[RMDB]
RNA sequence: GGGAACGACUCGAGUAGAGUCGAAAACUGGAUUCUUUCGAGAAUCCAGCAUGUCUAGUCGGUAGCGAACGAUCAACGCUAGCGACUAGACUUUAUUGAUCGCAUUUGCCUCUUUCGAGAGGCAAAACACAUGAGCCUAAUUCGUUAGGCUCAUGUGAAAAGAAACAACAACAACAAC
Reactivity to 2A3 in 0.01 (KOAc 150mM, MgCl2 10mM, bicine 150mM(pH8.5), 24C), signal-to-noise 2, nucleotides 027 to 126: c000u010g010g000a000u010u000c010u020u110u110c150g100a010g000a010a000u000c010c000a000g000c020a030u090g010u020c000u020a000g000u000c000g000g210u010a000g000c010g020a090a040c040g070a130u150c050a020a060c000g020c010u010a040g150c000g000a000c000u000a000g000a000c000u000u030u000a030u010u040g070a030u130c100g000c230a130u030u000u040g000c000c000u010c000u000u010u160c210g060a000g000a000g000g010c000a010a000a000a000
Reactivity to DMS in 0.01 (KOAc 150mM, MgCl2 10mM, bicine 150mM(pH8.5), 24C), signal-to-noise 6, nucleotides 027 to 126: c000u000g000g000a010u000u000c000u000u000u010c170g010a020g010a020a000u000c000c000a010g010c120a060u010g010u000c000u000a010g000u000c000g000g010u000a010g000c000g010a080a090c160g000a110u010c170a110a050c000g000c000u000a000g000c010g000a010c010u000a000g000a000c000u000u010u000a060u010u000g000a090u000c110g020c270a180u000u000u000g000c000c000u000c000u000u000u010c180g020a020g010a020g010g000c000a000a000a020a140
An RNA of 177 nucleotides, treated with 2A3 and DMS and read out base by base.
Values are in units of 0.01, from 0 to 300, in steps of 10.
Values cover nucleotides 27 to 126.
DMS adducts were read by reverse transcription with MarathonRT.
The RNA was probed in 150 mM KOAc, 10 mM MgCl2 and 150 mM bicine (pH 8.5) at 24 C.